This 177-nucleotide RNA was probed chemically with DMS and 2A3. The DMS profile rests on 1,409 reads. Conditions: 150 mM KOAc, 10 mM MgCl2 and 150 mM bicine (pH 8.5), 24 C. Reactivities are given for positions 27 through 126. Reactivities are rounded to 0.1 and cut off at 0 and 3.

[RMDB]
RNA sequence: GGGAACGACUCGAGUAGAGUCGAAAAUUCAUUAUGUCUAUAACGAUGUCGAAAGCCUCACCGCAGCGGCGCGCGAAGCCGGUGACGAUCUGGCGGCAAUCCUCGUUUCGGCAUUCAAGCACGAUCACCUCAUAUAGCUCUUCGGAGCUAUAUGAGGAAAAGAAACAACAACAACAAC
Reactivity to DMS in 0.01 (KOAc 150mM, MgCl2 10mM, bicine 150mM(pH8.5), 24C), signal-to-noise 2, nucleotides 027 to 126: u000u020c030a090u000u020a070u010g020u000c030u020a110u010a060a060c050g020a030u010g010u000c090g010a050a070a300g010c040c040u000c070a070c060c050g040c010a060g000c020g020g010c040g040c160g050c180g000a110a130g010c000c010g030g000u010g020a100c060g000a060u010c090u000g010g000c040g040g010c040a040a150u000c040c030u000c040g030u000u010u000c200g010g000c000a020u000u000c180a040a120g030c090a020c130g000a090u020c130a170
Reactivity to 2A3 in 0.01 (KOAc 150mM, MgCl2 10mM, bicine 150mM(pH8.5), 24C), signal-to-noise 2, nucleotides 027 to 126: u080u040c030a020u030u220a050u090g020u000c020u010a070u020a190a020c010g040a030u070g080u150c040g030a040a010a020g030c010c030u010c020a020c010c030g000c030a070g100c010g040g000c010g000c040g040c050g170a130a020g000c000c000g110g040u020g010a060c020g010a040u030c020u060g040g020c050g010g000c010a000a010u010c000c000u000c000g050u020u030u030c030g010g000c020a030u060u070c060a020a010g070c040a010c100g080a080u060c030a010